[RMDB]
RNA sequence: GGGAACGACUCGAGUAGAGUCGAAAACAUGUUUGAGGACAACCUGGGGCCUCAGCUGUCCAAAGCGGACAGGUGGCGGGAGUAUGUCAGCCAGGUGUCCUGGGGGAAGCUGAAGCGGAGGGUGAAGGGUACCCCUCAUUUUCGAAUGAGGGGUACCAAAAGAAACAACAACAACAAC
Reactivity to DMS in 0.01 (KOAc 150mM, MgCl2 10mM, bicine 150mM(pH8.5), 24C), signal-to-noise 1, nucleotides 027 to 126: c170a100u030g000u020u000u000g000a050g040g000a020c040a070a050c000c000u000g010g000g000g020c000c020u000c000a000g000c000u000g000u000c000c000a120a080a230g030c240g000g000a020c000a000g010g000u020g010g000c210g000g000g000a130g000u010a050u000g000u000c190a100g010c040c000a020g000g000u000g000u000c000c010u000g000g000g000g000g030a150a100g000c210u000g020a100a110g010c120g000g000a130g030g000g020u030g000a100a070g000